RNA sequence: GGGAACGACUCGAGUAGAGUCGAAAAGAAGGCUCCUUCGGGAGCCUUCAAACUGGUGUCCCGACCAGGCUGGAUGUCAAUCCCUGAAGUCUUAGAUCGGGAAAAGUUGCAACUUCGGUUGCAACAACACCUUCUAGACGUUCGCGUCUAGAAGGUGAAAAGAAACAACAACAACAAC
Reactivity to DMS in 0.01 (KOAc 150mM, MgCl2 10mM, bicine 150mM(pH8.5), 24C), signal-to-noise 1, nucleotides 027 to 126: g000a070a010g010g010c000u000c000c000u010u010c170g020g010g000a010g000c000c000u000u010c000a010a060a060c050u000g010g000u010g000u000c000c000c000g000a030c000c000a040g010g000c040u000g000g010a020u010g010u040c290a120a120u010c040c040c190u030g000a130a130g010u000c040u010u020a120g030a090u000c000g010g000g000a020a070a060a260g000u000u010g000c000a000a000c010u000u010c130g010g010u000u050g010c010a010a000c000a110a190